Record summary
Chemical mapping of a 177-nucleotide RNA with 2A3 and DMS. For 2A3 the reverse transcriptase was SuperScript II with manganese. DMS adducts were read by reverse transcription with MarathonRT.
RNA sequence: GGGAACGACUCGAGUAGAGUCGAAAAUGCCAGUUCUUUAUGUUGAAUCCACAUCUGUGUCUCUGCAACUCACACUCCUUGGAGCCGUGCAGAGCAAAAUGUCUAAUGCUGCUUCCACAAAUAUUUGUUUUCAGUAGAUUUUCGAAUCUACUGAAAAAAAAGAAACAACAACAACAAC
Reactivity to 2A3 in 0.01 (KOAc 150mM, MgCl2 10mM, bicine 150mM(pH8.5), 24C), signal-to-noise 9, nucleotides 027 to 126: u130g030c000c010a030g040u080u040c050u050u160u080a160u180g100u060u110g060a050a030u030c030c010a030c010a070u020c060u070g120u020g090u110c000u000c000u020g010c010a030a070c010u030c030a130c010a030c080u070c040c020u060u140g050g010a010g020c060c050g060u030g000c010a010g000a000g000c000a000a010a010a030u100g020u010c030u080a050a050u080g030c010u010g000c000u030u000c020c000a050c050a060a110a020u190a150u100u100u170g090
Reactivity to DMS in 0.01 (KOAc 150mM, MgCl2 10mM, bicine 150mM(pH8.5), 24C), signal-to-noise 7, nucleotides 027 to 126: u020g010c040c020a100g000u000u010c040u000u010u020a060u040g010u010u010g000a130a110u020c040c060a050c050a050u010c040u000g010u000g010u020c010u010c010u010g000c010a060a120c070u010c080a080c210a110c080u010c050c060u010u020g000g010a040g010c160c120g010u000g010c030a020g000a040g010c050a050a050a070a040u010g010u010c060u000a070a100u000g010c030u000g000c040u000u000c020c010a060c080a060a060a090u030a070u010u010u010g000
Reactivities are given for positions 27 through 126.